[RMDB]
RNA sequence: GGGAACGACUCGAGUAGAGUCGAAAAUGUCGCGCCGCCUCGUCUCGAUGUCUGCGGUCACGAUCUCCGCAGGUUACGGCCGCUGCUGUGCCCGCAGUCGCCCGCGAUGGUGGGCCCGUCGGGGUAGACUGUCUUGGAGUUUCGACUCCAAGACAGUAAAAGAAACAACAACAACAAC
Reactivity to DMS in 0.01 (KOAc 150mM, MgCl2 10mM, bicine 150mM(pH8.5), 24C), signal-to-noise 2, nucleotides 027 to 126: u010g040u030c080g020c120g000c020c040g010c010c020u000c020g000u020c030u030c080g010a110u020g010u000c000u020g000c000g000g000u040c090a140c150g020a120u010c050u000c060c050g020c070a040g010g030u000u070a120c120g000g000c020c060g040c050u020g000c050u020g050u010g030c000c000c000g010c020a050g020u000c120g000c010c000c050g010c040g040a090u040g010g020u000g000g040g010c030c060c090g000u020c020g000g020g000g000u010a070g010
Reactivity to 2A3 in 0.01 (KOAc 150mM, MgCl2 10mM, bicine 150mM(pH8.5), 24C), signal-to-noise 3, nucleotides 027 to 126: u130g020u050c030g010c000g030c080c020g050c020c010u030c030g050u010c020u010c060g090a070u120g050u040c010u020g020c010g010g000u010c010a040c110g100a170u050c040u020c110c050g000c010a010g040g000u050u100a030c070g080g000c000c010g000c020u030g000c010u050g020u050g040c020c000c000g000c000a010g020u050c010g010c030c030c010g140c010g020a030u060g030g040u070g040g050g050c010c010c000g010u010c020g000g030g000g010u010a080g030